An RNA of 177 nucleotides, treated with DMS and read out base by base.
For DMS, 1,757 sequencing reads were counted.
It was measured as part of the RMDB library TTRDES.
RNA sequence: GGGAACGACUCGAGUAGAGUCGAAAAGAUAUGGACUGCGAAGAACAUGUGGGAGAUCGCCAUCGGAAACGAUGGGCGAUAUACCACAUGGGAGCAGUCCUAAGUCAAAGGAGGCUUCGGCCUCCAACCACUGAGUAGGGUUCGCCCUACUCAGUGGAAAAGAAACAACAACAACAAC
Reactivity to DMS in 0.01 (KOAc 150mM, MgCl2 10mM, bicine 150mM(pH8.5), 24C), signal-to-noise 2, nucleotides 027 to 126: g010a040u050a300u000g030g010a000c010u000g000c000g000a110a130g020a080a210c010a000u000g000u000g010g010g000a070g000a010u000c000g000c020c000a030u030c000g020g010a150a100a180c020g010a020u010g020g020g000c020g000a010u000a030u030a200c000c000a000c000a000u000g000g000g000a130g030c000a010g020u000c000c000u000a000a130g000u000c060a060a070a170g010g000a000g030g000c010u000u000c240g000g000c000c010u000c000c020a000a070